[RMDB]
RNA sequence: GGGAACGACUCGAGUAGAGUCGAAAAGAAUGGCGAAAGCGAGGAGCUCCGGGUGGAUAUUUUUUCCCUGAACGUUCCGCAGGAACCAUCCUUCGCGGGACCUGCACCGUGUUGGAUGCAAAAAGAAGAAUACGAUUUAGUUCGCUAAAUCGUAUUCAAAAGAAACAACAACAACAAC
Reactivity to DMS in 0.01 (KOAc 150mM, MgCl2 10mM, bicine 150mM(pH8.5), 24C), signal-to-noise 4, nucleotides 027 to 126: g010a070a050u010g010g020c040g020a130a110a140g010c040g010a090g010g000a150g000c050u000c080c040g010g000g040u010g010g000a080u000a000u000u000u010u000u010u000c000c000c010u000g000a060a140c120g010u000u010c010c010g010c090a090g010g010a050a060c110c030a010u000c010c000u000u000c020g000c000g010g010g000a060c050c060u010g000c050a100c010c000g000u010g010u000u010g000g000a020u010g010c130a060a060a030a060a060g010a120a100
Reactivity to 2A3 in 0.01 (KOAc 150mM, MgCl2 10mM, bicine 150mM(pH8.5), 24C), signal-to-noise 2, nucleotides 027 to 126: g030a020a030u080g010g000c010g050a150a050a000g030c030g020a050g000g040a030g030c040u000c020c060g070g050g020u090g000g060a040u030a160u090u100u020u000u050u040c000c010c000u030g090a130a020c040g000u020u000c020c040g130c060a030g000g040a010a020c000c020a010u030c000c010u010u030c000g000c000g040g000g020a050c000c010u080g000c030a040c020c000g010u020g040u030u050g000g000a010u010g040c040a020a000a000a110a040g080a100a030
This 177-nucleotide RNA was probed chemically with DMS and 2A3. The data come from the RNA Mapping Database (RMDB), library M2PK90. Reactivities are given for positions 27 through 126. For 2A3, 3,460 sequencing reads were counted. For 2A3 the reverse transcriptase was SuperScript II with manganese. Conditions: 150 mM KOAc, 10 mM MgCl2 and 150 mM bicine (pH 8.5), 24 C.